RNA sequence: GGGAACGACUCGAGUAGAGUCGAAAAGCCAGUCAGAGGGCGCUACCAUGCAACCUAGGGCUGGCUACUCUUGCACAGAAUCACCUUUCUAUAAUAACCAGUGCAAGAAGGGUUAUUAUACCAUUUAAAAAUCGUGAAUGCUUCGGCAUUCACGAAAGUUAAUAUCAUGCUUCGGCAUGAUAUUAACAAAAGAAACAACAACAACAAC
Reactivity to 2A3 in 0.01 (KOAc 150mM, MgCl2 10mM, bicine 150mM(pH8.5), 24C), signal-to-noise 7, nucleotides 027 to 156: g000c000c000a000g000u000c000a000g000a010g080g030g020c030g010c020u150a300c110c090a120u280g000c000a030a020c000c000u010a010g000g010g010c000u000g000g010c000u000a000c000u000c000u000u010g010c000a010c000a010g110a130a100u100c050a230c070c000u110u270u180c110u110a020u000a010a010u000a000a000c010c000a000g000u000g010c000a000a000g000a000a000g000g000g000u000u000a010u000u020a010u010a030c020c030a090u110u220u300a100a130a040a040a060u030c000g000u000g000a000a000u000g000c010u030u040c110g060g000c000a000u000u000c000a000c000g000a000a000a000
Reactivity to DMS in 0.01 (KOAc 150mM, MgCl2 10mM, bicine 150mM(pH8.5), 24C), signal-to-noise 2, nucleotides 027 to 156: g030c010c020a060g040u000c010a120g000a040g000g020g030c100g040c010u000a130c130c150a180u000g030c040a020a040c000c000u000a020g000g000g000c000u000g030g020c010u000a050c000u000c010u050u000g000c000a040c020a100g000a150a120u000c090a120c040c020u000u010u010c080u000a030u000a050a060u000a040a030c000c020a300g010u000g020c010a040a030g010a050a060g020g000g000u000u000a020u000u000a010u000a100c230c080a250u030u000u000a030a050a090a130a110u000c020g010u000g000a000a010u020g000c000u000u000c300g020g000c000a040u010u000c000a000c000g000a000a010a060